Chemical mapping of a 170-nucleotide RNA with 2A3 and DMS.

RNA sequence: GGGAACGACUCGAGUAGAGUCGAAAAUCCCCCUCGAGCCUUCUUCGAGUCGGACCGGCUCAUCUCGGCAGAGGGCGGCAGUCCUGGGUUCUCUUAUCUUUUCUCUGAUAAAGAGGAGACCGCUGGAAGAGUUGGGUGUUCGCACCCAACAAAAGAAACAACAACAACAAC
Reactivity to 2A3 in 0.01 (KOAc 150mM, MgCl2 10mM, bicine 150mM(pH8.5), 24C), signal-to-noise 6, nucleotides 027 to 129: u010c000c000c000c000c010u030c010g050a060g010c010c000u070u070c020u030u060c070g000a010g000u020c040g030g050a060c060c070g030g010c010u020c010a080u070c070u030c020g030g000c050a020g040a010g060g000g000c050g070g000c060a030g050u000c010c020u060g000g000g010u230u040c000u000c000u030u080a150u020c000u000u050u140u030c150u010c050u090g040a110u210a150a060a020g040a020g000g000a010g000a010c000c030g080c100u050g050g050a080a040g040a070
Reactivity to DMS in 0.01 (KOAc 150mM, MgCl2 10mM, bicine 150mM(pH8.5), 24C), signal-to-noise 3, nucleotides 027 to 129: u000c000c030c020c070c060u020c030g000a000g020c030c020u020u040c040u040u020c000g050a000g030u020c090g080g020a180c060c000g020g040c030u000c040a000u000c000u030c000g000g000c000a000g020a050g040g010g030c000g020g040c160a150g020u020c000c010u000g030g010g010u000u000c020u020c030u030u030a120u000c040u010u010u070u030c130u050c140u000g040a040u000a070a050a030g010a060g000g020a040g040a050c030c010g040c080u000g000g000a090a110g020a080
DMS adducts were read by reverse transcription with MarathonRT. Values cover nucleotides 27 to 129. The DMS profile rests on 12,645 reads. The data come from the RNA Mapping Database (RMDB), library 15KLIB.